[RMDB]
This 177-nucleotide RNA was probed chemically with 2A3 and DMS. Source: RMDB library TTRDEL, as collected in RNAgym. Reactivities are given for positions 27 through 126. The reactions ran in a buffer of 150 mM KOAc, 10 mM MgCl2 and 150 mM bicine (pH 8.5), at 24 C.
RNA sequence: GGGAACGACUCGAGUAGAGUCGAAAAGAUAUGGAAAGAACUACCUCAAAGUAGGCGUUGAAAUCGGAAACGAUGGAGCCUACGGAGAGGCUUUCCUAAGUCAAACAUCCCUGUUCGCAGGGAUGAAGGAUUUAUAAGUCUUCGGACUUAUAAAUCCAAAAGAAACAACAACAACAAC
Reactivity to 2A3 in 0.01 (KOAc 150mM, MgCl2 10mM, bicine 150mM(pH8.5), 24C), signal-to-noise 2, nucleotides 027 to 126: g010a020u100a020u160g000g030a020a010a000g000a080a060c130u150a110c210c000u000c020a020a020a020g010u000a000g020g000c060g200u300u050g030a060a020a000u010c020g000g040a080a050a030c010g000a010u010g010g020a000g000c000c000u000a000c000g000g000a000g000a000g020g000c000u000u000u000c000c000u020a130a000g030u030c040a060a070a080c010a010u000c000c000c010u010g030u010u070c300g030c090a000g030g010g000a010u020g020a030a060
Reactivity to DMS in 0.01 (KOAc 150mM, MgCl2 10mM, bicine 150mM(pH8.5), 24C), signal-to-noise 3, nucleotides 027 to 126: g000a050u010a300u000g000g000a010a000a000g000a050a060c080u020a300c010c000u000c000a000a300a280g000u000a000g000g010c010g020u000u010g020a070a120a030u000c000g000g000a090a060a190c010g010a020u000g010g000a130g020c000c000u000a000c000g000g000a300g000a000g000g020c000u010u000u000c000c000u000a060a130g000u000c040a120a070a290c000a010u000c000c000c000u010g000u010u010c190g020c010a020g000g000g000a000u000g000a060a070